Annotation
The record gives the reactivity of an RNA of 177 nucleotides to DMS and 2A3.
[RMDB]
RNA sequence: GGGAACGACUCGAGUAGAGUCGAAAAUGUCCCAGUUUCGACUGGGACAAAAGCAUGAGGAGGAUCAAAGAUCAAAGCCGUCGGUCAUGCGUAAAGACGGCAAAAGGCUAGUGUUCGCACUAGCCAAGCAAUAAUUGGUGUUCGCACCAAUUAUUGCAAAAGAAACAACAACAACAAC
Reactivity to DMS in 0.01 (KOAc 150mM, MgCl2 10mM, bicine 150mM(pH8.5), 24C), signal-to-noise 2, nucleotides 027 to 126: u000g010u000c000c000c000a020g000u010u000u010c190g010a020c030u000g000g000g000a000c000a000a010a080a090g010c030a030u000g000a040g030g010a130g010g010a100u000c070a090a050a120g010a090u000c070a070a050a080g000c000c000g010u000c000g000g010u010c040a050u000g000c020g000u000a060a090a130g010a010c000g020g040c050a030a010a070a090g020g010c000u000a010g020u000g000u000u020c220g020c000a010c000u000a010g010c000c000a020a050
Reactivity to 2A3 in 0.01 (KOAc 150mM, MgCl2 10mM, bicine 150mM(pH8.5), 24C), signal-to-noise 2, nucleotides 027 to 126: u040g000u000c010c000c000a000g000u040u040u080c190g070a010c010u000g010g000g010a000c010a000a050a000a000g010c010a020u030g000a020g120g060a030g030g040a090u110c110a160a140a020g060a020u120c040a000a000a120g010c010c020g000u000c000g010g000u030c010a040u050g000c010g010u020a010a050a000g010a000c000g000g000c000a010a030a010a000g010g000c000u000a000g000u020g030u040u090c250g040c080a000c000u010a000g000c000c000a010a000

The data come from the RNA Mapping Database (RMDB), library M2PK50. The RNA was probed in 150 mM KOAc, 10 mM MgCl2 and 150 mM bicine (pH 8.5) at 24 C.